[RMDB]
RNA sequence: GGGAACGACUCGAGUAGAGUCGAAAACUAGACAUUUUAUUUAAAAUCUGGCACUGGCUUUGGAGAGGUGAGGGAUUGUCAAUUUGUUUUUAUUUUGAGGCCAGGCACAAUCAUAACACAAACAGGCUAGCUGUAGGUAGUUCGCUACCUACAGCUAAAAAGAAACAACAACAACAAC
Reactivity to 2A3 in 0.01 (KOAc 150mM, MgCl2 10mM, bicine 150mM(pH8.5), 24C), signal-to-noise 2, nucleotides 027 to 126: c030u020a010g040a000c010a040u030u000u190u150a300u050u180u160a090a150a050a090u030c060u030g010g000c010a090c090u080g000g000c030u080u090u120g030g050a170g070a160g030g040u300g120a130g000g020g080a050u150u000g020u000c020a110a040u010u070u030g030u020u240u020u040u000a110u030u250u000u040g020a000g010g010c000c000a000g010g000c030a020c040a060a060u150c090a040u020a170a030c040a000c010a070a110a040c020a000g060g070c030
Reactivity to DMS in 0.01 (KOAc 150mM, MgCl2 10mM, bicine 150mM(pH8.5), 24C), signal-to-noise 2, nucleotides 027 to 126: c060u040a140g020a050c030a040u020u020u030u020a090u100u020u010a050a050a050a120u000c120u010g000g060c050a070c060u010g010g000c020u000u010u000g030g000a040g000a110g000g010u000g000a060g000g010g000a060u000u000g070u030c050a070a080u030u010u000g010u000u050u000u000u040a080u010u020u020u030g020a040g000g010c000c000a000g030g030c230a030c100a080a130u010c120a080u000a080a040c120a020c170a020a100a110c130a080g000g010c130

An RNA of 177 nucleotides, treated with 2A3 and DMS and read out base by base. Values cover nucleotides 27 to 126. Conditions: 150 mM KOAc, 10 mM MgCl2 and 150 mM bicine (pH 8.5), 24 C. Values are in units of 0.01, from 0 to 300, in steps of 10. The DMS profile rests on 1,646 reads.